[RMDB]
RNA sequence: GGGAACGACUCGAGUAGAGUCGAAAAAGUCGUGAACUGGGGGGACAUUUCCAGUCUCCCCCUCCAGAUCCGGCGCAAUACCACAGAAGGAGAAAGCCGAGUAUCUUUGUUCGCAAAGAUACUCGGCGUUGUGGAAUGGGUUCGCCCAUUCCACAACAAAAGAAACAACAACAACAAC
Reactivity to 2A3 in 0.01 (KOAc 150mM, MgCl2 10mM, bicine 150mM(pH8.5), 24C), signal-to-noise 1, nucleotides 027 to 126: a010g020u000c020g010u060g100a110a010c020u020g010g020g000g000g030g000a000c000a040u140u210u180c050c030a030g000u010c010u050c000c000c010c000c000u030c000c000a030g030a100u000c000c000g040g000c060g060c050a060a100u090a190c020c000a010c070a090g210a260a060g040g080a080g050a100a200a030g040c010c010g000a010g000u000a030u000c040u000u010u000g050u060u050c210g000c150a010a020a020g020a000u010a000c000u030c020g010g010c010
Reactivity to DMS in 0.01 (KOAc 150mM, MgCl2 10mM, bicine 150mM(pH8.5), 24C), signal-to-noise 1, nucleotides 027 to 126: a120g010u000c010g010u010g040a050a130c050u010g020g020g000g010g020g000a080c120a090u010u020u010c120c100a100g010u000c080u010c050c040c000c000c010u000c000c030a040g010a060u000c020c080g000g000c010g000c150a110a090u020a160c020c000a130c160a130g010a160a070g020g010a080g000a090a030a150g030c000c000g000a050g000u000a000u000c010u000u000u000g000u000u020c200g020c000a000a000a000g000a020u020a010c000u000c000g000g000c000

Chemical mapping of a 177-nucleotide RNA with 2A3 and DMS. DMS adducts were read by reverse transcription with MarathonRT. Reactivities are rounded to 0.1 and cut off at 0 and 3. For DMS, 872 sequencing reads were counted. Values cover nucleotides 27 to 126. For 2A3 the reverse transcriptase was SuperScript II with manganese.